Structure probing data (2A3 and DMS) for a 177-nucleotide construct. For DMS the reverse transcriptase was MarathonRT. The RNA was probed in 150 mM KOAc, 10 mM MgCl2 and 150 mM bicine (pH 8.5) at 24 C. For DMS, 2,502 sequencing reads were counted.
RNA sequence: GGGAACGACUCGAGUAGAGUCGAAAAGACCGCGGGCGAAAUCGUAGCAAAUCGGAACAAUUCGUACGCGUAGCGUACACGCCUUGGCUGCGUGACGACGGUGCCGCUGGCGCCGCUGCGUGCGACCUGGAGCAAGACAAUUCGUUGUCUUGCUCCAAAAAGAAACAACAACAACAAC
Reactivity to 2A3 in 0.01 (KOAc 150mM, MgCl2 10mM, bicine 150mM(pH8.5), 24C), signal-to-noise 2, nucleotides 027 to 126: g050a000c000c000g020c010g010g030g000c010g050a080a030a030u050c030g030u030a040g020c040a010a040a130u160c060g020g020a070a040c010a050a140u150u040c010g010u040a010c000g010c040g070u060a020g030c000g000u030a090c000a000c010g010c000c000u130u190g140g010c110u060g050c020g010u000g020a000c020g010a000c010g000g000u040g000c000c040g240c300u200g000g000c010g020c010c000g000c070u120g010c010g000u010g010c000g000a010c010c010
Reactivity to DMS in 0.01 (KOAc 150mM, MgCl2 10mM, bicine 150mM(pH8.5), 24C), signal-to-noise 3, nucleotides 027 to 126: g010a160c050c040g040c070g010g010g020c000g000a050a100a080u010c040g030u010a080g020c060a060a100a150u020c100g010g010a100a100c170a080a180u020u000c030g020u000a000c000g020c020g020u010a110g030c030g020u010a100c020a040c040g020c010c020u000u010g030g000c150u000g020c010g000u000g000a070c030g010a220c030g000g000u000g010c000c040g000c200u000g020g020c030g000c000c000g010c100u000g000c000g040u000g010c010g010a040c300c050